[RMDB]
This 177-nucleotide RNA was probed chemically with DMS.
The RNA was probed in 150 mM KOAc, 10 mM MgCl2 and 150 mM bicine (pH 8.5) at 24 C.
The DMS profile rests on 648 reads.
RNA sequence: GGGAACGACUCGAGUAGAGUCGAAAAAGAACUUCCGACCAGAAGGAACAAUGGAUGCAUCGGAUGCCCUAGAUUCUCUCCAACCGGAAACACUAGGGACAAGUAUGUUGCCAGCGUCAGUGGAUGACAGUCGGAGUACGUUCGCGUACUCCGACUGAAAAGAAACAACAACAACAAC
Reactivity to DMS in 0.01 (KOAc 150mM, MgCl2 10mM, bicine 150mM(pH8.5), 24C), signal-to-noise 1, nucleotides 027 to 126: a020g040a070a050c180u000u000c040c010g000a100c060c080a190g010a070a020g000g010a070a060c140a080a220u000g000g000a040u010g030c020a020u000c040g030g010a160u010g010c020c000c000u000a000g000a240u010u000c070u000c010u010c000c040a150a060c220c290g000g000a000a000a070c220a090c020u000a030g000g000g020a030c010a030a000g040u020a060u000g000u010u000g030c000c040a040g010c190g040u000c100a070g000u010g000g010a120u000g000a150